About this RNA:
Chemical mapping of a 207-nucleotide RNA with 2A3.
RNA sequence: GGGAACGACUCGAGUAGAGUCGAAAAGCGAAGAUCGGACGGUGGCUGCAAGUCGCAUCGCAAAACCGCGGCAAGUGGAGUUAGCGAGAGGAGGCUGGGUUUUGGCUUCCUUAAGCAAUCGGUCACCAUAAGAGGAUUCGCUUCGGCGAAUCCUCAACGGAAUGUAUCGGUUCGCCGAUACAUUCCGAAAAGAAACAACAACAACAAC
Reactivity to 2A3 in 0.01 (KOAc 150mM, MgCl2 10mM, bicine 150mM(pH8.5), 24C), signal-to-noise 1, nucleotides 027 to 156: g070c030g080a030a000g040a150u190c160g040g040a050c050g020g000u000g010g000c000u030g020c120a130a000g010u070c030g020c000a020u070c020g040c100a060a000a020a030c020c020g000c000g040g070c130a190a120g040u050g060g050a160g040u090u060a020g000c000g000a010g000a040g040g000a000g000g000c010u040g000g130g190u140u070u130u280g010g000c000u010u000c000c000u010u030a080a010g000c000a000a040u050c020g000g000u010c000a000c000c000a020u050a180a020g000a000g000g000a000u000u000c000g000c000u030u020c020g080g000c000g000a000a000u010c000c010u000c010a000a020
It was measured as part of the RMDB library M2RFPK. Conditions: 150 mM KOAc, 10 mM MgCl2 and 150 mM bicine (pH 8.5), 24 C. The 2A3 profile rests on 955 reads.